[RMDB]
RNA sequence: GGGAACGACUCGAGUAGAGUCGAAAACUACUGUGCGCCGCCAUUCGCGAGCAGUGGCCCUGCUGUAGGACCUCUGAUUGAAAGCAAACAUCAUCAAAUUACCAUCGCACAGUGGUCCGGAUUUUUAUGCAUUUAGUCCAUUCGUGGACUAAAUGCAAAAAGAAACAACAACAACAAC
Reactivity to 2A3 in 0.01 (KOAc 150mM, MgCl2 10mM, bicine 150mM(pH8.5), 24C), signal-to-noise 2, nucleotides 027 to 126: c000u000a010c010u000g000u010g000c000g000c010c060g000c030c090a200u130u140c070g000c000g040a080g030c030a010g010u030g000g040c000c030c020u060g010c100u170g110u240a030g000g000a050c000c020u050c020u040g050a150u130u140g040a190a110a050g010c030a100a060a040c020a100u160c030a030u050c010a090a030a080u100u070a080c040c010a070u070c000g000c000a000c020a000g020u020g010g000u080c070c060g090g040a080u060u180u020u000u040a160
Reactivity to DMS in 0.01 (KOAc 150mM, MgCl2 10mM, bicine 150mM(pH8.5), 24C), signal-to-noise 1, nucleotides 027 to 126: c000u050a020c000u010g000u000g000c000g020c210c110g000c050c090a080u000u000c090g010c060g010a150g000c000a020g010u000g000g000c060c040c000u000g000c220u000g000u000a020g060g040a010c060c000u010c030u010g010a070u000u010g000a100a090a150g000c130a060a070a140c120a030u020c060a020u000c150a060a080a070u000u000a100c090c050a100u000c030g010c000a070c010a000g010u000g000g030u030c060c010g010g000a080u000u000u000u020u000a090
Notes: Chemical mapping of a 177-nucleotide RNA with 2A3 and DMS. For DMS the reverse transcriptase was MarathonRT. It was measured as part of the RMDB library OK2TST. Conditions: 150 mM KOAc, 10 mM MgCl2 and 150 mM bicine (pH 8.5), 24 C. For 2A3 the reverse transcriptase was SuperScript II with manganese.